[RMDB]
RNA sequence: GGGAACGACUCGAGUAGAGUCGAAAAAUGAGAUCCCAUCUUGCACACUGUGCUAAUUUGAGAUUCUCAUGCCUCCUACUUGGAGAGAUCUGGACUAAAAGUCAGGGCAUCUGACUCUGCCAGCCACAAAACGUACAAGGCUUCGGCCUUGUACGAACAGUAUCGAGGACUUCGGUCCUCGAUACUGAAAAGAAACAACAACAACAAC
Reactivity to 2A3 in 0.01 (KOAc 150mM, MgCl2 10mM, bicine 150mM(pH8.5), 24C), signal-to-noise 2, nucleotides 027 to 156: a020u030g000a020g000a010u010c000c030c000a010u010c010u010u030g000c000a040c010a080c230u300g000u020g060c020u110a040a050u000u000u030g050a050g010a040u300u000c030u010c010a000u060g030c010c000u000c010c010u110a200c080u110u190g010g000a060g000a010g010a110u060c020u010g010g010a060c050u160a110a040a010a040g010u010c000a020g040g080g130c100a150u120c110u010g020a020c000u000c010u020g030c000c000a030g030c020c010a100c060a030a080a070a030c020g000u000a010c010a000a000g000g000c020u030u080c190g070g000c000c000u000u000g000u010a000c000g010a000a010